Source: RMDB library OK2TRN, as collected in RNAgym. This 177-nucleotide RNA was probed chemically with DMS and 2A3. Conditions: 150 mM KOAc, 10 mM MgCl2 and 150 mM bicine (pH 8.5), 24 C. The DMS profile rests on 37,882 reads.
[RMDB]
RNA sequence: GGGAACGACUCGAGUAGAGUCGAAAAGAACGAGUUCUGCCCAUUUCUUAUAUCCUUUCCUCAGCAGAACUCGAAGGGCUUGAGAACGAGGAUGGAAAGGAUAUAAGAAAUGUUCUCAAGCCCAAGACUACUCGUAACUAUUCGUAGUUGCGAGUAGAAAAGAAACAACAACAACAAC
Reactivity to DMS in 0.01 (KOAc 150mM, MgCl2 10mM, bicine 150mM(pH8.5), 24C), signal-to-noise 9, nucleotides 027 to 126: g000a190a050c010g000a030g000u000u000c000u000g000c020c030c090a020u000u000u000c000u000u000a040u000a130u010c030c020u000u000u000c000c000u000c020a260g000c020a020g010a010a020c000u000c000g010a060a040g030g010g020c010u000u000g000a010g010a010a020c010g000a020g000g000a030u000g000g000a080a100a210g010g010a120u000a030u000a000a010g000a010a010a010u000g000u000u000c000u000c000a020a010g000c000c000c000a010a030g000a180
Reactivity to 2A3 in 0.01 (KOAc 150mM, MgCl2 10mM, bicine 150mM(pH8.5), 24C), signal-to-noise 6, nucleotides 027 to 126: g030a030a010c000g000a000g000u000u000c000u000g000c020c010c010a010u000u010u000c000u000u030a060u010a080u190c010c000u030u140u010c000c000u000c000a000g000c000a000g000a000a000c000u000c000g000a030a010g000g000g000c010u000u000g000a000g000a000a000c010g000a000g000g000a000u010g010g050a020a020a010g050g010a010u010a000u000a060a000g000a000a000a000u010g000u000u000c000u000c000a000a000g000c000c000c000a010a000g010a000